Notes:
Chemical mapping of a 177-nucleotide RNA with DMS and 2A3. 2A3 adducts were read by reverse transcription with SuperScript II with manganese. The RNA was probed in 150 mM KOAc, 10 mM MgCl2 and 150 mM bicine (pH 8.5) at 24 C. High 2A3 reactivity points to a flexible backbone, as in loops and unpaired stretches. Values are in units of 0.01, from 0 to 300, in steps of 10. Source: RMDB library OK1LIB, as collected in RNAgym.
RNA sequence: GGGAACGACUCGAGUAGAGUCGAAAAGUGCUUGAGCACUGUCGUUGCGGAUGUCGAUCCGGAAAGACAUGACGAGAGUUCGAUCCGAUCCGGAAAGCAUUUGCUCUCUUUGUGCUCUUGCACGAAAGGGACAGCCGAGCUUCGGCUUGGUUGUCCCAAAAGAAACAACAACAACAAC
Reactivity to DMS in 0.01 (KOAc 150mM, MgCl2 10mM, bicine 150mM(pH8.5), 24C), signal-to-noise 8, nucleotides 027 to 126: g010u010g000c000u000u000g000a020g020c010a020c000u010g000u020c200g010u020u010g010c000g000g010a000u000g000u060c080g020a270u000c010c000g000g000a020a300a140g010a040c130a150u060g000a030c030g010a160g000a190g000u020u010c100g000a170u000c060c010g000a210u020c030c020g000g000a020a160a300g010c140a020u000u000u000g000c010u010c040u000c060u010u030u010g000u000g000c000u000c020u000u000g010c000a000c010g000a020a060a100
Reactivity to 2A3 in 0.01 (KOAc 150mM, MgCl2 10mM, bicine 150mM(pH8.5), 24C), signal-to-noise 9, nucleotides 027 to 126: g000u000g000c000u000u000g000a000g010c000a000c010u030g070u090c120g100u110u080g010c000g010g000a000u010g080u300c020g010a040u000c000c000g000g010a020a030a010g030a010c040a100u150g010a000c030g020a010g030a030g250u130u090c030g030a170u000c030c010g020a110u010c010c000g000g000a010a010a000g000c000a010u010u010u030g000c010u000c000u000c000u150u250u080g000u000g000c000u000c000u000u000g000c000a000c000g000a040a010a010